[RMDB]
RNA sequence: GGGAACGACUCGAGUAGAGUCGAAAAGACCCCGUAGCCGACGCGCGUUUUGUGCGGGAUGAAACCGAUCCGACGGUCGCCGAGAUCGCGUUCACGGUUGCCGACGCGUAUCAGGGCAGGGGGAUUGGAAUUGCCCUGAGUUCGCUCAGGGCAAUUCAAAAGAAACAACAACAACAAC
Reactivity to 2A3 in 0.01 (KOAc 150mM, MgCl2 10mM, bicine 150mM(pH8.5), 24C), signal-to-noise 1, nucleotides 027 to 126: g040a020c000c020c020c060g230u130a000g040c000c020g030a030c040g010c010g010c000g040u060u010u070u150g210u150g030c010g040g060g070a220u040g000a070a020a040c000c000g000a020u040c000c000g020a050c040g110g100u120c060g000c080c030g120a180g000a090u030c040g030c130g080u020u010c050a040c010g090g060u030u130g000c020c010g010a000c000g000c000g000u000a030u040c040a150g000g070g000c000a000g000g000g010g000g000a000u020u130g160
Reactivity to DMS in 0.01 (KOAc 150mM, MgCl2 10mM, bicine 150mM(pH8.5), 24C), signal-to-noise 1, nucleotides 027 to 126: g040a190c000c000c000c020g010u030a090g020c010c020g020a060c060g030c000g000c010g000u000u000u010u020g100u020g000c000g010g010g020a130u000g000a070a050a090c050c010g030a040u000c000c010g020a050c020g000g040u030c210g000c020c030g040a160g000a010u000c010g000c240g000u010u000c000a030c030g000g000u030u040g000c000c020g000a020c030g000c000g040u000a060u000c050a090g010g020g070c000a190g000g020g000g020g000a090u000u000g030